[RMDB]
RNA sequence: GGGAACGACUCGAGUAGAGUCGAAAAGAUAUGGAUUAUGGUAGGGAGGUCCGUUCGGAAACGAACGAAGACCAUCGAUCUACGUAAUCCUAAGUCAAAGAAUCGAGAAGUUCGCUUCUCGAUUCAACCUAUUGGAGGAGUUCGCUCCUCCAAUAGGAAAAGAAACAACAACAACAAC
Reactivity to 2A3 in 0.01 (KOAc 150mM, MgCl2 10mM, bicine 150mM(pH8.5), 24C), signal-to-noise 3, nucleotides 027 to 126: g010a010u030a020u100g000g010a000u030u040a040u130g300g050u040a030g040g110g140a110g020g030u010c000c000g000u010u010c000g000g010a040a010a010c000g000a000a000c010g030a130a060g010a000c010c000a020u200c070g040a060u000c010u000a010c010g000u000a000a000u000c000c000u000a040a000g000u000c040a190a010a190g010a000a010u000c000g000a000g000a000a010g010u080u230c300g080c150u000u020c010u000c000g000a000u000u010c000a000a000
Reactivity to DMS in 0.01 (KOAc 150mM, MgCl2 10mM, bicine 150mM(pH8.5), 24C), signal-to-noise 4, nucleotides 027 to 126: g020a030u000a130u020g010g010a020u000u000a010u000g040g040u010a010g010g010g030a220g040g010u000c010c000g010u000u000c000g030g000a020a030a070c000g020a010a000c000g000a100a160g000a010c000c010a180u010c300g000a080u000c000u000a000c000g020u000a000a030u000c000c000u000a020a110g000u000c010a130a130a160g000a010a010u000c000g000a010g000a010a020g000u000u020c300g010c000u000u000c000u010c000g000a000u000u000c000a070a100
The data come from the RNA Mapping Database (RMDB), library TTRDES. This 177-nucleotide RNA was probed chemically with 2A3 and DMS. The DMS profile rests on 4,466 reads. 2A3 adducts were read by reverse transcription with SuperScript II with manganese. The reactions ran in a buffer of 150 mM KOAc, 10 mM MgCl2 and 150 mM bicine (pH 8.5), at 24 C.